Source: RMDB library RNAMAK, as collected in RNAgym. An RNA of 207 nucleotides, treated with 2A3 and DMS and read out base by base.

RNA sequence: GGGAACGACUCGAGUAGAGUCGAAAACGAUGUUUCGACAUCGAAAAAAUCCUAAGUCUCGGACUAUUGACUUGUCAGGAGCUCUCGGAAACGAGAGAGCUCCUUGGAUUUAGUCAACGAAUCCGAGAUAUGGAAAAAAUCAUGAUUCGUCAUGAAAAGAUCUCAUACAGUUCGCUGUAUGAGAUCUAAAAGAAACAACAACAACAAC
Reactivity to 2A3 in 0.01 (KOAc 150mM, MgCl2 10mM, bicine 150mM(pH8.5), 24C), signal-to-noise 3, nucleotides 027 to 156: c020g000a000u010g000u030u180u120c110g080a000c010a000u000c000g060a170a010a010a000a000a030u080c010c000u040a090a040g030u000c000u000c000g010g010a030c030u060a060u020u010g000a000c000u000u010g000u000c000a010g010g000a000g000c000u000c000u000c010g150g110a250a180a130c230g020a060g000a000g000a000g100c020u000c000c000u010u060g010g000a000u150u050u250a000g000u000c000a010a000c010g110a070a130u000c000c000g000a000g010a000u000a010u000g000g100a000a030a030a020a010a090u050c010a010u000g020a010u060u110c190g070u010c070a010u050g030a020a120a030
Reactivity to DMS in 0.01 (KOAc 150mM, MgCl2 10mM, bicine 150mM(pH8.5), 24C), signal-to-noise 1, nucleotides 027 to 156: c040g020a070u000g040u000u010u000c200g010a220c030a030u010c010g000a000a000a040a090a170a150u000c000c000u030a040a270g020u010c000u000c000g050g030a120c020u000a070u000u000g010a000c020u010u000g010u020c000a040g050g010a020g000c000u000c010u000c010g040g000a160a120a240c150g010a300g010a000g000a000g010c000u000c000c000u000u010g010g020a050u000u000u000a040g010u000c030a000a020c000g000a050a040u000c000c010g040a030g030a040u000a110u010g040g010a000a070a030a100a070a120u000c020a020u010g000a090u000u010c300g050u000c000a000u000g010a060a140a170

About this RNA: For DMS the reverse transcriptase was MarathonRT. For DMS, 2,082 sequencing reads were counted. The 2A3 profile rests on 2,796 reads. Values cover nucleotides 27 to 156. The reactions ran in a buffer of 150 mM KOAc, 10 mM MgCl2 and 150 mM bicine (pH 8.5), at 24 C. High DMS reactivity at an A or C suggests that its Watson-Crick edge is free.